An RNA of 207 nucleotides, treated with DMS and 2A3 and read out base by base. The data come from the RNA Mapping Database (RMDB), library OK3TST. Conditions: 150 mM KOAc, 10 mM MgCl2 and 150 mM bicine (pH 8.5), 24 C. The DMS profile rests on 4,750 reads. For 2A3 the reverse transcriptase was SuperScript II with manganese.

RNA sequence: GGGAACGACUCGAGUAGAGUCGAAAAUGGUCUCGAACUUACAACUAUGAGGUACUUUGUUAAAAUUGGAAGACCACAAAAAUGUGAAUGCGGUAAAAGUGCAACUUGUUAUAGUAGCUCGCAAUCUGUUUAUGCUUGCUUCAAGCAUGCACUAGGAAUACUCUCUCUAGUUCGCUAGAGAGAGUAUAAAAGAAACAACAACAACAAC
Reactivity to DMS in 0.01 (KOAc 150mM, MgCl2 10mM, bicine 150mM(pH8.5), 24C), signal-to-noise 2, nucleotides 027 to 156: u010g020g040u000c010u000c020g040a030a090c040u010u010a080c060a080a140c070u000a160u000g010a160g030g030u010a050c050u000u010u010g010u000u000a090a040a110a140u000u010g010g000a100a110g000a050c000c010a010c040a030a080a070a080a110u010g020u000g000a100a200u010g000c050g000g030u000a070a060a080a050g040u000g000c000a050a020c020u000u010g020u000u000a090u000a120g020u000a050g020c040u000c140g040c080a060a090u010c060u020g000u000u010u000a070u010g020c050u010u010g000c020u000u000c060a070a030g010c010a070u000g010c010a050c030u000a090g020g000a090
Reactivity to 2A3 in 0.01 (KOAc 150mM, MgCl2 10mM, bicine 150mM(pH8.5), 24C), signal-to-noise 2, nucleotides 027 to 156: u060g000g010u000c020u010c030g050a150a100c040u130u100a040c030a100a040c060u060a080u230g030a050g040g050u090a100c030u060u110u070g050u070u130a150a120a090a070u060u080g070g010a080a030g000a020c040c000a020c060a030a070a020a040a020u090g010u050g050a140a090u120g030c060g060g030u100a100a050a030a060g020u020g020c000a020a070c020u040u040g050u070u120a120u050a180g110u070a000g040c040u000c030g010c020a030a120u080c070u080g190u180u200u070a060u100g020c000u050u030g000c000u040u090c010a020a030g000c040a120u030g000c010a010c020u020a000g070g000a050